RNA sequence: GGGAACGACUCGAGUAGAGUCGAAAACAGAUUCGUACAUUAGCAAUGAAUUUCUGGGCAACGAUUGAACAUACUUUACGAUAUAAAUAUGAUGGUGCUUAUCCGGAUGAAAUUCAACAUCGUUUGGUGUUGCGUAUACUUUCGAGUAUACGCAACAAAAAGAAACAACAACAACAAC
Reactivity to DMS in 0.01 (KOAc 150mM, MgCl2 10mM, bicine 150mM(pH8.5), 24C), signal-to-noise 3, nucleotides 027 to 126: c080a080g010a080u000u000c040g020u000a090c090a120u010u000a090g000c090a070a070u020g000a060a040u000u010u000c040u020g000g000g020c080a040a050c070g010a100u010u000g000a080a100c050a070u000a040c080u000u010u020a040c050g020a080u010a270u000a040a060a080u000a050u000g010a140u010g010g010u000g010c050u000u000a060u010c020c040g010g010a100u010g000a030a040a100u000u000c050a050a070c160a060u010c050g020u010u010u000g010g020
Reactivity to 2A3 in 0.01 (KOAc 150mM, MgCl2 10mM, bicine 150mM(pH8.5), 24C), signal-to-noise 3, nucleotides 027 to 126: c040a030g060a080u090u070c050g060u100a050c040a200u190u140a050g050c090a070a140u070g040a040a040u040u060u010c020u070g000g090g000c020a040a000c030g060a070u080u100g040a050a000c010a030u100a080c060u100u120u100a050c040g040a030u090a020u040a180a110a020u120a080u120g040a060u050g020g010u080g000c020u060u100a060u030c040c000g050g010a020u080g040a050a040a070u130u070c020a010a030c020a120u060c050g120u010u090u120g110g030
The record gives the reactivity of an RNA of 177 nucleotides to DMS and 2A3.
Conditions: 150 mM KOAc, 10 mM MgCl2 and 150 mM bicine (pH 8.5), 24 C.